[RMDB]
RNA sequence: GGGAACGACUCGAGUAGAGUCGAAAACAGAAUCACUUCGGUGAUUCUGAAAGAAAGAAGAAAACGCGCGACGACGAGCGCGAAAUAUAUAAAUCGUCGUAAAAAUCGAGUCCUUCGGGACUCGAAACGAUAUCACACAGUUCGCUGUGUGAUAUCGAAAAGAAACAACAACAACAAC
Reactivity to 2A3 in 0.01 (KOAc 150mM, MgCl2 10mM, bicine 150mM(pH8.5), 24C), signal-to-noise 3, nucleotides 027 to 126: c010a000g000a000a010u000c000a010c010u050u070c160g110g000u000g010a010u000u000c000u000g000a010a000a020g060a020a080a010g120a070a030g090a030a140a020a050c010g010c010g000c000g070a010c000g000a010c000g010a000g020c000g020c010g030a010a030a010u070a000u020a010u070a010a060a020u010c000g010u000c000g000u000a020a070a000a000a000u020c010g000a000g020u000c000c010u100u150c200g060g000g000a000c000u000c000g000a000a000a000
Reactivity to DMS in 0.01 (KOAc 150mM, MgCl2 10mM, bicine 150mM(pH8.5), 24C), signal-to-noise 2, nucleotides 027 to 126: c040a020g000a050a010u000c000a000c010u010u020c200g040g010u000g010a010u000u000c000u000g010a020a060a130g030a070a060a090g010a130a210g010a100a080a070a220c010g020c000g020c020g000a010c010g010a000c000g010a000g010c000g000c000g000a000a020a070u000a060u020a080u000a020a030a040u000c000g000u000c010g040u010a040a050a040a130a070u000c020g000a000g000u000c000c000u020u000c190g030g000g050a020c000u010c000g000a010a020a060
Chemical mapping of a 177-nucleotide RNA with 2A3 and DMS.